RNA sequence: GGGAACGACUCGAGUAGAGUCGAAAAGGGGUCAUGGCGUUUGACGCCAUACACGCAACAGCAUAUCUGAAGCCUCCACGGAUAUGACAUGCGUUAAUGGCCGAGCCAUGACGGAGGCACCCAUGGGUUGGCUACGUGUUCGCACGUAGCCAACCAAGCAAUUGCCAUGAUUCGUCAUGGCAAUUGCAAAAGAAACAACAACAACAAC
Reactivity to 2A3 in 0.01 (KOAc 150mM, MgCl2 10mM, bicine 150mM(pH8.5), 24C), signal-to-noise 1, nucleotides 027 to 156: g010g010g050g020u000c000a010u010g010g000c030g000u150u270u300g030a050c030g050c020c020a010u010a020c120a000c000g050c040a200a120c010a250g020c000a000u020a010u020c000u020g050a090a020g010c000c000u000c000c000a000c000g000g000a000u010a000u010g220a110c060a210u300g000c000g000u000u080a100a040u010g000g000c000c060g030a000g000c000c000a000u010g010a000c010g000g010a000g010g010c000a050c010c000c000a000u170g090g010g020u000u000g010g000c000u000a010c000g000u010g070u080u110c300g010c100a000c000g010u050a000g000c000c000a000a000c000c000a000a000